[RMDB]
RNA sequence: GGGAACGACUCGAGUAGAGUCGAAAAGAUAUGGACUGAGGGAGCUUUAAGCCAUCGGAAACGAUGGUAAGCAUCGAUCUCACAUGUCCUAAGUCAAAACGGUACACCUCUUCGGAGGUGUACCGAACCUACAUCGUCAGUUCGCUGACGAUGUAGGAAAAGAAACAACAACAACAAC
Reactivity to 2A3 in 0.01 (KOAc 150mM, MgCl2 10mM, bicine 150mM(pH8.5), 24C), signal-to-noise 3, nucleotides 027 to 126: g000a000u040a010u050g000g000a000c020u050g000a050g010g050g000a020g030c070u280u270u120a070a030g010c010c000a010u000c000g020g010a020a000a000c010g000a010u000g010g010u020a020a000g010c000a060u300c070g000a050u020c010u020c000a080c040a110u250g020u000c010c010u000a030a010g000u020c020a000a000a110a200c030g000g010u010a000c010a020c010c010u000c020u060u110c300g090g000a000g000g000u000g000u000a000c000c000g010a000a000
Reactivity to DMS in 0.01 (KOAc 150mM, MgCl2 10mM, bicine 150mM(pH8.5), 24C), signal-to-noise 2, nucleotides 027 to 126: g000a020u010a090u010g000g010a030c000u010g010a040g000g010g000a020g020c020u010u000u010a060a300g000c000c000a000u010c020g000g000a010a020a040c010g010a000u000g010g030u000a010a070g040c090a180u020c170g000a050u000c000u010c000a160c140a070u010g010u000c000c000u000a000a080g010u010c000a050a080a090a150c000g000g010u000a020c000a000c000c000u000c020u020u020c230g010g000a020g000g000u000g000u000a010c010c000g000a000a030